[RMDB]
RNA sequence: GGGAACGACUCGAGUAGAGUCGAAAACAAUGCCACCUUCGUCAAAGAUUCGUUCAAUUCUGCCACUAUUGUGUUGGACGAUUCGCAACCGUCUCCUUCCAACUCAACAUUCGUGAUCGGUGCAGCACGUCGCAUUAGGUUUCGACCUAAUGCGACGAAAAGAAACAACAACAACAAC
Reactivity to DMS in 0.01 (KOAc 150mM, MgCl2 10mM, bicine 150mM(pH8.5), 24C), signal-to-noise 2, nucleotides 027 to 126: c160a110a070u010g000c010c030a050c060c040u000u010c050g010u000c090a070a090a140g030a060u010u000c020g010u000u020c040a070a030u000u000c000u000g000c130c110a070c140u010a100u020u020g030u000g040u010u000g010g000a020c280g000a030u000u010c050g020c160a070a080c080c020g010u000c050u000c030c020u000u000c010c030a010a100c050u000c040a040a030c110a100u000u000c100g000u000g020a070u010c020g000g000u000g000c110a050g010c110a110